[RMDB]
RNA sequence: GGGAACGACUCGAGUAGAGUCGAAAAGUCUAGCGAAGGGAUCCCACCCGGGAUACACGCAAGUCGCGAAUUAGGCCGACCGGCCAAGGUCAAUUGCAGAACUCAACUGCAUGAGUAAGCUAGACGAAAUUAUCCAGUAGUUCGCUACUGGAUAAUUAAAAGAAACAACAACAACAAC
Reactivity to 2A3 in 0.01 (KOAc 150mM, MgCl2 10mM, bicine 150mM(pH8.5), 24C), signal-to-noise 7, nucleotides 027 to 126: g000u000c000u000a010g000c010g100a200a130g030g030g010a030u020c010c000c020a100c020c030c010g010g010g000a080u110a080c060a020c070g010c040a080a050g170u140c050g010c030g050a100a200u160u060a190g040g020c050c010g070a140c070c100g020g000c010c010a020a020g050g010u030c010a030a080u050u010g000c000a010g040a190a100c050u060c240a050a150c020u020g010c020a020u030g000a010g080u020a010a020g000c000u000a000g000a000c000g000a020
Reactivity to DMS in 0.01 (KOAc 150mM, MgCl2 10mM, bicine 150mM(pH8.5), 24C), signal-to-noise 9, nucleotides 027 to 126: g010u000c000u000a000g010c010g010a150a100g010g010g010a070u000c000c000c000a300c070c040c060g010g000g000a060u000a060c080a100c130g010c050a090a080g010u000c100g010c050g010a110a130u010u000a130g010g010c050c020g010a080c200c300g000g000c020c030a070a090g000g000u000c020a060a110u000u000g000c010a040g000a090a090c170u010c230a060a090c030u000g000c030a020u000g000a220g000u010a060a140g000c000u000a000g000a020c000g010a080

About this RNA
An RNA of 177 nucleotides, treated with 2A3 and DMS and read out base by base. The 2A3 profile rests on 12,279 reads.